[RMDB]
RNA sequence: GGGAACGACUCGAGUAGAGUCGAAAAGAUAUGGAGCCCAGGAACUACCCACAGUAGACAUGCGUGUAAGGGUCGGAAACGACCUAUCACGCAACAGCUACGUGGGUAGUUCCUGGGCUCCUAAGUCGAUCUUUACUAUGUUCGCAUAGUAAAGAUCAAAAGAAACAACAACAACAAC
Reactivity to DMS in 0.01 (KOAc 150mM, MgCl2 10mM, bicine 150mM(pH8.5), 24C), signal-to-noise 1, nucleotides 027 to 126: g010a090u000a300u010g000g000a000g010c030c000c000a000g030g000a030a010c010u000a000c000c000c020a000c000a170g030u010a000g000a060c090a230u010g010c000g040u000g020u010a110a300g020g020g000u000c000g000g010a080a140a250c010g010a010c000c020u020a250u000c000a000c000g000c000a020a020c290a250g000c000u000a010c010g010u000g000g000g040u000a000g000u000u000c040c000u000g010g000g030c010u000c000c020u000a010a070g000u000c080

Annotation: Structure probing data (DMS) for a 177-nucleotide construct. It was measured as part of the RMDB library TTRINS. For DMS, 1,802 sequencing reads were counted.